This 177-nucleotide RNA was probed chemically with 2A3 and DMS. For DMS, 1,063 sequencing reads were counted. DMS adducts were read by reverse transcription with MarathonRT. 2A3 adducts were read by reverse transcription with SuperScript II with manganese. The RNA was probed in 150 mM KOAc, 10 mM MgCl2 and 150 mM bicine (pH 8.5) at 24 C. For 2A3, 1,283 sequencing reads were counted.
RNA sequence: GGGAACGACUCGAGUAGAGUCGAAAAUCGCUUCGAGUGUCAGCUCCAGCAACUGUUCGGGCGGAUCAAGGGAGAUUCCGGCGUGGGCGCCAAGCUACAUGGCGAUCGUCGAGAUCCAGGCUCGUACCUAUCGUCAUGAGUUCGCUCAUGACGAUAGAAAAGAAACAACAACAACAAC
Reactivity to 2A3 in 0.01 (KOAc 150mM, MgCl2 10mM, bicine 150mM(pH8.5), 24C), signal-to-noise 2, nucleotides 027 to 126: u030c010g000c070u080u140c120g010a000g030u030g160u100c000a030g030c000u000c000c020a040g000c010a030a110c080u060g000u180u070c000g000g050g010c000g050g000a030u030c020a080a070g120g040g020a220g040a210u290u060c090c000g010g030c010g010u040g090g100g020c000g000c070c070a040a020g030c020u090a140c050a090u070g070g000c050g040a040u020c030g030u040c000g010a010g000a040u010c000c000a040g190g000c010u010c040g010u040a040c000
Reactivity to DMS in 0.01 (KOAc 150mM, MgCl2 10mM, bicine 150mM(pH8.5), 24C), signal-to-noise 1, nucleotides 027 to 126: u030c090g010c090u000u000c060g000a040g010u000g000u000c050a090g020c020u020c050c030a120g040c090a080a040c190u040g000u000u000c040g030g010g010c020g000g010a050u000c070a100a130g000g000g000a080g000a140u000u000c110c030g000g000c020g010u000g010g030g010c000g020c120c040a040a080g010c030u000a110c060a050u000g010g000c000g000a010u000c120g020u030c000g000a210g010a030u000c000c060a090g020g010c010u010c030g010u000a070c070